[RMDB]
This 207-nucleotide RNA was probed chemically with 2A3. For 2A3 the reverse transcriptase was SuperScript II with manganese. Values are in units of 0.01, from 0 to 300, in steps of 10. Values cover nucleotides 27 to 156. The reactions ran in a buffer of 150 mM KOAc, 10 mM MgCl2 and 150 mM bicine (pH 8.5), at 24 C. The 2A3 profile rests on 1,399 reads.

RNA sequence: GGGAACGACUCGAGUAGAGUCGAAAACGAAUGAUGAUAACCUAAAUAAUAAUCUCUUGCUGAUUCCUUUUGAUAUUCCGUUCUGGAAUAUUGGGGGAUACUCUGUGACUCUUUAUUCAUAGUUACUCUGACUCUAGCCUUGGAUUCGUCCAAGGAAGACUGUCUAAGGUUUCGACCUUAGACAGUCAAAAGAAACAACAACAACAAC
Reactivity to 2A3 in 0.01 (KOAc 150mM, MgCl2 10mM, bicine 150mM(pH8.5), 24C), signal-to-noise 3, nucleotides 027 to 156: c050g030a040a070u090g020a000u010g020a070u050a100a050c020c040u040a100a040a040u040a040a070u050a060a130u070c020u020c050u100u100g030c020u050g030a080u020u070c000c000u030u120u210u220g010a000u010a000u010u020c010c030g130u160u180c220u300g000g000a010a010u000a010u000u010g010g000g010g000g020a000u030a050c050u050c060u050g040u020g020a030c010u060c050u150u100u090a060u120u050c040a040u060a130g010u000u030a060c030u070c030u130g040a060c020u030c040u130a050g070c000c000u000u010g010g000a010u030u030c140g030u000c050c000a000a000g020g010a000a010